[RMDB]
RNA sequence: GGGAACGACUCGAGUAGAGUCGAAAAGCUCGGAGACGAGCAAGGCUGACAAAACCCUGUCCCAACCUCCACGUGGUGUCGGCUGGAUAAUGCUGCAUUAUGUUGCAUUUAUCAACUGGGAAGAAAAACCUCCGGGAUCAUUCGUGAUCCCGGAGGUAAAAGAAACAACAACAACAAC
Reactivity to 2A3 in 0.01 (KOAc 150mM, MgCl2 10mM, bicine 150mM(pH8.5), 24C), signal-to-noise 2, nucleotides 027 to 126: g000c000u000c000g080g010a080g000a010c030g000a000g010c000a000a070g020g010c010u040g040a010c070a020a100a080a120c000c000c010u020g070u000c000c000c000a030a010c040c000u090c040c040a120c150g100u190g040g000u020g000u010c000g000g000c000u090g040g000a020u010a010a000u000g000c020u010g000c000a040u190u140a060u300g000u010u030g020c000a000u080u020u120a040u010c070a060a040c020u100g040g000g030a050a050g050a010a130a040a010

An RNA of 177 nucleotides, treated with 2A3 and read out base by base. Reactivities are given for positions 27 through 126. The data come from the RNA Mapping Database (RMDB), library OK1LIB.